Structure probing data (2A3 and DMS) for a 207-nucleotide construct. DMS adducts were read by reverse transcription with MarathonRT. The 2A3 profile rests on 2,436 reads. For DMS, 3,297 sequencing reads were counted.
[RMDB]
RNA sequence: GGGAACGACUCGAGUAGAGUCGAAAAAGUGUAUGAAGUACGUAGAGUGUCGGCAAGCUCUAUAUAUGGACACUGACGAAGGGUUUUGGUUGUUUUGUAUCUCAAGCCGACUUUGAGUAUUUGAGGAAAAAGACUUACGCCUUCGGGCGUAAGUCAAGGAUAAAUUGAAGUUCGCUUCAAUUUAUCCAAAAGAAACAACAACAACAAC
Reactivity to 2A3 in 0.01 (KOAc 150mM, MgCl2 10mM, bicine 150mM(pH8.5), 24C), signal-to-noise 4, nucleotides 027 to 156: a010g070u070g010u050a200u130g060a060a030g010u030a010c030g000u010a000g000a010g000u020g040u050c060g010g030c060a090a050g000c020u000c020u010a020u000a010u000a020u070g030g020a000c010a000c020u030g040a030c050g060a040a060g090g040g010u030u060u120u150g070g000u000u020g030u010u030u010u040g030u040a110u030c000u000c040a020a020g010c000c010g050a040c040u070u080u130g040a030g020u040a100u070u130u110g060a060g000g030a060a080a010a010a030g000a000c000u000u000a000c000g000c010c000u050u060c120g100g010g000c020g000u000a000a000g000u000c000a000a000
Reactivity to DMS in 0.01 (KOAc 150mM, MgCl2 10mM, bicine 150mM(pH8.5), 24C), signal-to-noise 1, nucleotides 027 to 156: a060g000u000g020u000a210u000g020a130a220g010u010a010c040g040u000a030g010a050g010u000g040u000c020g010g000c040a150a300g020c020u010c020u010a020u020a020u000a020u010g010g020a060c030a010c000u010g000a090c050g050a100a100g010g020g010u000u000u020u010g010g010u020u000g000u000u010u010u000g020u010a070u000c020u010c020a030a070g000c000c020g000a060c030u000u000u010g000a150g000u000a040u000u000u000g020a100g000g020a020a080a060a090a090g000a050c000u000u000a000c000g000c000c010u000u000c300g000g020g020c000g020u000a000a000g010u000c030a000a030